[RMDB]
RNA sequence: GGGAACGACUCGAGUAGAGUCGAAAAGAUAUGGACGCUUAGACAACAGGACAUGGGUCCUGCUCGGAAACGAGCAGACCCAACAGCCUGUCGAGCGUCCUAAGUCAAAGGCAUGUUCGCAUGCCAAGAAAUCGUACAAGUUCGCUUGUACGAUUUCAAAAGAAACAACAACAACAAC
Reactivity to 2A3 in 0.01 (KOAc 150mM, MgCl2 10mM, bicine 150mM(pH8.5), 24C), signal-to-noise 3, nucleotides 027 to 126: g020a010u080a040u170g000g000a000c000g010c040u060u060a130g030a160c120a200a030c030a200g000g050a050c040a190u160g010g000g000u090c050c090u020g000c000u000c000g010g040a070a090a060c010g000a000g000c000a000g000a000c000c010c000a000a010c020a000g020c000c020u040g010u010c010g000a010g000c000g000u000c000c000u000a020a010g040u000c040a120a060a020g010g000c000a010u010g010u080u110c100g010c150a000u000g010c020c000a000a000
Reactivity to DMS in 0.01 (KOAc 150mM, MgCl2 10mM, bicine 150mM(pH8.5), 24C), signal-to-noise 4, nucleotides 027 to 126: g010a020u000a300u000g000g010a000c000g040c010u010u020a160g040a140c240a110a090c090a030g000g010a040c050a240u000g010g020g000u000c210c080u000g000c000u000c000g000g000a090a050a160c010g010a020g020c000a010g010a020c000c000c000a010a020c200a180g000c010c020u010g010u010c030g010a000g000c000g000u000c000c010u010a000a060g000u010c020a080a120a180g010g000c000a000u000g000u000u010c220g010c010a010u000g000c000c010a050a050